The record gives the reactivity of an RNA of 207 nucleotides to 2A3.

RNA sequence: GGGAACGACUCGAGUAGAGUCGAAAAAUACAUAACAACCUUGUAAAUAUCUUCACAACAGCGUUCAGACUCGUACAAGACGCGAUUGAAAUCGUGUUCGGCUUCCUAAACGUGGCUCCUCAGAUAUUCAGAGCAUUUAGUAUAUUUGUACAAGAUGACGGUCUAUCAUGUUCGCAUGAUAGACCGUAAAAGAAACAACAACAACAAC
Reactivity to 2A3 in 0.01 (KOAc 150mM, MgCl2 10mM, bicine 150mM(pH8.5), 24C), signal-to-noise 1, nucleotides 027 to 156: a010u060a010c090a030u190a090a040c040a070a070c160c050u000u020g040u110a040a140a100u030a090u090c090u160u170c160a070c030a120a100c040a050g070c010g050u040u010c030a060g050a100c050u090c100g040u070a080c010a060a050g070a010c020g020c010g000a030u000u160g140a130a110a000u040c000g000u000g050u070u040c010g000g020c000u050u070c010c000u020a010a060a060c080g000u000g040g050c000u040c000c000u080c010a040g030a020u070a090u220u050c090a000g000a010g060c010a010u030u070u070a000g000u010a000u040a030u160u110u090g020u090a020c010a060a000g060a030u170g030
The 2A3 profile rests on 455 reads. Source: RMDB library OK3TST, as collected in RNAgym. 2A3 adducts were read by reverse transcription with SuperScript II with manganese. The RNA was probed in 150 mM KOAc, 10 mM MgCl2 and 150 mM bicine (pH 8.5) at 24 C.